[RMDB]
RNA sequence: GGGAACGACUCGAGUAGAGUCGAAAAGUGUUUCCAUCAACCUUAUGAGAGUGGUGGCCUGUUUUCAGGUUCACUUUCCAAGUCUCAUUAAGCUCCCCAUAUGGCUAGCCGUACCCCAGGACCAUAGCGGGAAGGGUAUUCCAUUAAAUGAGAGUUCUAAUCAGUAAGAAUUCGUUCUUACUGAUUAAAAAGAAACAACAACAACAAC
Reactivity to DMS in 0.01 (KOAc 150mM, MgCl2 10mM, bicine 150mM(pH8.5), 24C), signal-to-noise 5, nucleotides 027 to 156: g020u000g010u010u010u000c020c040a170u000c070a050a060c040c010u000u030a080u000g010a080g010a110g030u000g010g030u000g010g000c000c000u010g000u000u000u010u010c010a020g020g010u000u010c040a000c010u000u010u000c090c070a100a190g020u000c010u000c010a040u000u000a080a120g000c020u000c000c000c010c020a160u000a040u010g010g020c050u000a110g000c060c020g020u000a280c020c010c010c030a190g030g020a080c030c010a050u000a050g020c120g030g010g010a070a060g000g010g010u000a080u000u010c060c040a100u010u000a050a070a060u000g010a090g010a100g030u000u000c030
Reactivity to 2A3 in 0.01 (KOAc 150mM, MgCl2 10mM, bicine 150mM(pH8.5), 24C), signal-to-noise 7, nucleotides 027 to 156: g090u060g040u040u050u040c050c030a070u120c040a040a160c030c020u120u100a060u120g020a020g000a000g080u070g020g020u030g030g030c000c000u080g050u110u130u120u300c030a010g000g000u210u280c000a000c000u050u070u010c060c010a110a050g090u010c000u000c010a010u080u080a070a020g010c010u030c020c000c000c010a000u010a010u040g020g010c060u060a050g140c020c010g050u090a090c020c010c000c020a010g020g000a010c010c010a040u020a020g030c140g030g000g030a050a070g050g000g020u050a090u120u060c030c020a050u090u160a080a050a070u110g030a040g020a020g090u120u100c100
About this RNA
Structure probing data (DMS and 2A3) for a 207-nucleotide construct. For DMS the reverse transcriptase was MarathonRT. High 2A3 reactivity points to a flexible backbone, as in loops and unpaired stretches. Conditions: 150 mM KOAc, 10 mM MgCl2 and 150 mM bicine (pH 8.5), 24 C. The DMS profile rests on 19,369 reads.